[RMDB]
The data come from the RNA Mapping Database (RMDB), library OK1LIB. The record gives the reactivity of an RNA of 177 nucleotides to 2A3. 2A3 adducts were read by reverse transcription with SuperScript II with manganese. Conditions: 150 mM KOAc, 10 mM MgCl2 and 150 mM bicine (pH 8.5), 24 C.
RNA sequence: GGGAACGACUCGAGUAGAGUCGAAAAAAGGAUAGACGUCUGGUCUUCUGUAGACUCUGCGUGUAGUCCAUGCAGCGUUCUAACCUGCGUUCCUGACUGGCGUUGCUUAGUUGAGAGACCAGACACACCCGUAGUGCGGUUUCGACCGCACUACGGGAAAAGAAACAACAACAACAAC
Reactivity to 2A3 in 0.01 (KOAc 150mM, MgCl2 10mM, bicine 150mM(pH8.5), 24C), signal-to-noise 1, nucleotides 027 to 126: a000a000g250g000a150u180a000g000a060c040g000u000c000u000g000g000u030c040u300u010c100u180g180u140a000g000a000c000u000c000u010g000c010g020u140g060u210a100g010u080c100c000a000u080g050c000a040g000c030g110u110u000c120u040a100a100c000c000u000g000c000g010u000u000c010c030u070g040a040c000u000g000g080c020g000u000u040g120c090u080u150a000g010u210u120g000a010g000a000g000a300c000c000a000g000a010c000a000c000a000